[RMDB]
RNA sequence: GGGAACGACUCGAGUAGAGUCGAAAAGGAUCUGAGUACUUAUAAGUGCGAAGUGAGUGAGGGUCUUACGAGCACCAAUUACAACCCUCUAUUAAGUAUCGAAGAUCGGCCGGAGAUCGAGAUACAACUAUUACCCGGCGACUGUACGAAGAUCCGACAUAGUACGUCCGUUCGCGGACGUACUAUGAAAAGAAACAACAACAACAAC
Reactivity to DMS in 0.01 (KOAc 150mM, MgCl2 10mM, bicine 150mM(pH8.5), 24C), signal-to-noise 1, nucleotides 027 to 156: g040g000a020u000c030u040g020a300g010u000a050c000u000u000a030u000a050a120g040u000g010c020g020a120a230g040u010g000a060g010u000g020a070g050g000g010u000c050u000u000a060c030g010a300g000c060a050c010c000a160a180u000u000a150c070a050a060c000c020c030u000c000u000a150u000u000a010a180g070u000a030u000c000g000a180a220g000a010u000c000g050g100c060c030g000g070a190g000a040u010c000g000a260g010a190u000a000c030a090a140c120u000a050u010u000a060c110c000c010g000g000c020g060a170c120u000g000u010a050c040g030a230a110g000a080u000c010c020g010a090
Reactivity to 2A3 in 0.01 (KOAc 150mM, MgCl2 10mM, bicine 150mM(pH8.5), 24C), signal-to-noise 2, nucleotides 027 to 156: g000g000a010u000c000u010g020a010g050u020a030c050u140u240a180u130a300a050g000u000g010c000g030a140a090g000u000g010a010g000u050g010a000g000g030g000u130c000u000u000a000c020g000a020g020c000a020c090c030a060a190u170u070a110c070a030a080c010c000c010u000c000u000a060u050u170a180a030g000u000a000u000c010g000a030a040g000a020u030c070g050g000c010c000g000g000a090g030a000u000c020g000a000g000a040u000a000c000a000a030c030u060a100u300u210a090c040c000c000g020g000c030g020a060c060u110g000u010a000c000g000a010a000g000a000u000c000c000g000a000
Background:
Chemical mapping of a 207-nucleotide RNA with DMS and 2A3. The data come from the RNA Mapping Database (RMDB), library OK3TST. The RNA was probed in 150 mM KOAc, 10 mM MgCl2 and 150 mM bicine (pH 8.5) at 24 C. For DMS, 1,368 sequencing reads were counted. Reactivities are given for positions 27 through 156.